The record gives the reactivity of an RNA of 177 nucleotides to 2A3 and DMS. DMS adducts were read by reverse transcription with MarathonRT. For 2A3, 2,102 sequencing reads were counted. It was measured as part of the RMDB library OK2TST. The DMS profile rests on 10,603 reads. The RNA was probed in 150 mM KOAc, 10 mM MgCl2 and 150 mM bicine (pH 8.5) at 24 C.
[RMDB]
RNA sequence: GGGAACGACUCGAGUAGAGUCGAAAAACGAUGCCAGAGAGUUGUGACAAGCCCUGGACUCUUUCUACAGAGCUGCAUUUUGAUGUAUAACAACAACCCGACAAUUAAGCUUGAUGAUGUGAUGAAAAAAAUACCAUGAUUUCGAUCAUGGUAUUUUAAAAGAAACAACAACAACAAC
Reactivity to 2A3 in 0.01 (KOAc 150mM, MgCl2 10mM, bicine 150mM(pH8.5), 24C), signal-to-noise 2, nucleotides 027 to 126: a010c030g010a030u080g020c000c020a010g040a000g000a010g080u060u100g040u080g040a020c020a090a020g000c010c000c020u000g010g010a070c000u000c000u030u060u010c020u030a060c040a040g060a030g040c020u040g020c030a050u050u070u100u150g050a050u050g060u020a080u040a190a040c030a030a000c000a010a030c000c000c020g030a030c010a030a040u180u110a100a010g020c040u060u020g040a030u060g000a040u040g100u040g020a150u110g050a100a070a010
Reactivity to DMS in 0.01 (KOAc 150mM, MgCl2 10mM, bicine 150mM(pH8.5), 24C), signal-to-noise 8, nucleotides 027 to 126: a080c120g010a070u000g010c010c030a080g000a130g010a130g020u010u000g020u000g010a110c090a080a100g000c030c020c030u000g010g000a090c070u000c050u000u010u010c070u010a100c110a070g010a060g000c060u000g010c040a040u000u000u010u000g010a080u000g010u010a050u010a070a080c090a040a040c070a040a090c010c010c010g000a090c140a050a080u010u010a060a120g010c060u000u000g010a100u000g000a070u000g010u000g010a080u010g000a000a000a030